The data come from the RNA Mapping Database (RMDB), library M2RFPK. Structure probing data (2A3 and DMS) for a 207-nucleotide construct. The DMS profile rests on 9,666 reads. The RNA was probed in 150 mM KOAc, 10 mM MgCl2 and 150 mM bicine (pH 8.5) at 24 C.

RNA sequence: GGGAACGACUCGAGUAGAGUCGAAAAAGUUAGGUUCGCUAUGGUGCAACUCUUUAAGGCAAUAACGAACUAAUUCUAAGCAAGUAAUGGAGAAAUGCCAGGGUCACUUUCUAGCCAUAAUAGUGCUGUAAGUGACUUAGAUUCGUCUAAGUCACAACAUGUUAGAUCCGUUCGCGGAUCUAACAUGAAAAGAAACAACAACAACAAC
Reactivity to 2A3 in 0.01 (KOAc 150mM, MgCl2 10mM, bicine 150mM(pH8.5), 24C), signal-to-noise 7, nucleotides 027 to 156: a000g060u040u040a050g030g080u020u020c010g000c030u020a030u100g130g080u100g030c050a130a170c060u120c120u190u190u220a140a060g050g000c020a050a040u060a100a030c020g010a000a000c000u020a010a020u070u090c070u130a060a020g030c020a030a040g040u100a040a050u100g020g010a060g010a050a060a020u060g010c020c050a050g050g000g000u040c010a010c050u020u060u070c020u050a040g010c000c000a010u040a160a050u040a160g120u070g030c050u030g060u100a190a050g010u010g000a000c000u000u000a000g000a000u020u030c100g010u000c140u000a000a000g000u000c000a000c010a030a020
Reactivity to DMS in 0.01 (KOAc 150mM, MgCl2 10mM, bicine 150mM(pH8.5), 24C), signal-to-noise 4, nucleotides 027 to 156: a070g020u000u000a030g030g010u000u000c020g030c020u000a030u010g020g030u000g020c020a070a120c120u000c140u010u010u000a100a090g020g010c020a110a070u000a020a030c020g020a030a050c000u000a020a080u000u000c050u000a090a110g010c030a060a090g000u000a070a090u020g000g000a140g010a060a070a070u000g020c000c030a090g010g020g010u000c040a050c040u000u000u010c040u000a100g020c020c010a090u000a060a120u000a100g010u000g020c000u010g020u000a070a150g020u000g000a030c000u000u010a000g000a060u000u030c300g040u000c000u000a010a010g010u000c000a020c010a110a180